[RMDB]
RNA sequence: GGGAACGACUCGAGUAGAGUCGAAAAGAUAUGGACCCACCGGAGCAACAGCUAUUGGGUCGGAAACGACCCACUGUAGACAUGCUCGUGGGUCCUAAGUCAAAAGGCACCAGUUCGCUGGUGCCAACUGAUUAUGUUGGUUCGCCAACAUAAUCAGAAAAGAAACAACAACAACAAC
Reactivity to 2A3 in 0.01 (KOAc 150mM, MgCl2 10mM, bicine 150mM(pH8.5), 24C), signal-to-noise 5, nucleotides 027 to 126: g010a010u020a010u040g000g000a000c030c000c030a010c080c260g300g060a030g010c080a110a300c180a300g040c040u030a030u120u090g000g000g000u010c000g000g000a000a000a000c000g010a000c040c020c020a000c020u030g000u010a010g020a070c170a300u230g000c000u010c010g000u000g000g010g000u000c000c000u000a000a000g000u000c000a000a010a050a140g000g010c000a000c000c000a000g020u100u120c300g030c140u010g000g000u000g000c000c000a000a000
Reactivity to DMS in 0.01 (KOAc 150mM, MgCl2 10mM, bicine 150mM(pH8.5), 24C), signal-to-noise 6, nucleotides 027 to 126: g000a030u000a050u010g010g000a020c010c000c000a010c230c300g040g010a010g020c010a110a120c190a140g010c010u000a030u000u000g010g010g020u000c000g010g000a020a020a020c030g010a010c000c000c010a010c300u010g010u000a030g010a070c140a090u010g010c000u000c010g010u000g000g000g010u000c000c000u000a000a050g000u010c010a100a080a090a140g010g010c000a010c000c000a020g010u000u010c260g030c000u010g000g010u010g000c000c010a010a020

The record gives the reactivity of an RNA of 177 nucleotides to 2A3 and DMS. The DMS profile rests on 6,461 reads. For 2A3 the reverse transcriptase was SuperScript II with manganese. Source: RMDB library TTRDES, as collected in RNAgym. Values cover nucleotides 27 to 126.